[RMDB]
Structure probing data (DMS and 2A3) for a 177-nucleotide construct. For 2A3, 7,615 sequencing reads were counted. The RNA was probed in 150 mM KOAc, 10 mM MgCl2 and 150 mM bicine (pH 8.5) at 24 C. The data come from the RNA Mapping Database (RMDB), library VIROID. 2A3 adducts were read by reverse transcription with SuperScript II with manganese.

RNA sequence: GGGAACGACUCGAGUAGAGUCGAAAACUUUUGAGAAGUUGAAAGACCUCUCAGCCCCUCCACCUUGGGGUGCCCUAUUCGAGGCACUGCAGUCUCGAUAGAAAGGCUAAGCACGUCGUAAUGACGUUCUAUACUGUAGGUUCGCCUACAGUAUAGAAAAAGAAACAACAACAACAAC
Reactivity to DMS in 0.01 (KOAc 150mM, MgCl2 10mM, bicine 150mM(pH8.5), 24C), signal-to-noise 5, nucleotides 027 to 126: c100u000u000u000u000g010a020g000a010a030g000u000u000g010a150a120a180g000a020c010c020u000c000u000c000a020g000c010c000c010c010u000c150c100a110c170c080u010u000g020g000g010g020u000g000c010c000c000u000a100u000u000c010g030a020g010g010c010a080c180u020g010c190a140g010u000c000u000c000g000a010u010a020g000a050a090a110g000g000c000u000a020a110g000c180a050c010g010u000c000g000u010a080a100u000g000a020c000g010u000
Reactivity to 2A3 in 0.01 (KOAc 150mM, MgCl2 10mM, bicine 150mM(pH8.5), 24C), signal-to-noise 3, nucleotides 027 to 126: c000u020u020u040u020g010a010g010a020a030g000u010u030g040a090a060a020g030a010c000c010u020c000u000c020a010g000c000c010c000c000u010c040c050a200c010c030u040u050g000g010g030g000u010g010c000c000c000u010a020u010u030c010g000a000g010g000c020a040c210u220g020c020a030g010u000c000u000c000g010a000u000a010g010a010a020a000g020g000c010u030a030a010g120c070a020c020g010u020c010g050u130a200a120u250g000a000c010g000u000